RNA sequence: GGGAACGACUCGAGUAGAGUCGAAAAAGUAUCGGGUUCGCCCGAUACUGUUGGCGCGCGGCCUUUGUCCUGUCGCGCGUAUAUUGCGCGCGAUAAACGCGCAUGUGGGGUCGUUCGCGACCCCAAAAGAUUUAGAAGAAUUCGUUCUUCUAAAUCUAAAAGAAACAACAACAACAAC
Reactivity to DMS in 0.01 (KOAc 150mM, MgCl2 10mM, bicine 150mM(pH8.5), 24C), signal-to-noise 3, nucleotides 027 to 126: a010g000u000a010u000c000g010g000g000u010u010c240g010c010c000c000g010a010u000a000c000u000g000u010u010g010g010c030g010c010g000c010g010g000c010c110u010u000u010g010u000c090c070u000g010u000c000g020c000g000c000g010u000a010u010a060u000u010g010c000g020c000g020c010g000a080u000a040a090a100c010g000c000g030c020a040u010g010u000g010g010g010g000u000c000g030u000u020c180g010c020g010a030c000c000c010c010a000a010a060
Reactivity to 2A3 in 0.01 (KOAc 150mM, MgCl2 10mM, bicine 150mM(pH8.5), 24C), signal-to-noise 1, nucleotides 027 to 126: a020g010u000a000u000c010g000g040g040u030u090c180g080c030c000c030g000a000u010a000c000u020g000u020u100g070g020c030g000c000g010c000g000g070c000c040u080u070u100g070u090c030c020u000g000u000c000g010c000g000c000g010u000a070u020a020u040u150g000c000g010c000g000c010g020a020u160a090a090a030c010g000c000g070c030a010u050g100u110g090g000g000g040u010c000g010u020u040c050g000c020g040a000c030c000c010c000a000a000a020
The data come from the RNA Mapping Database (RMDB), library M2PK50. Structure probing data (DMS and 2A3) for a 177-nucleotide construct.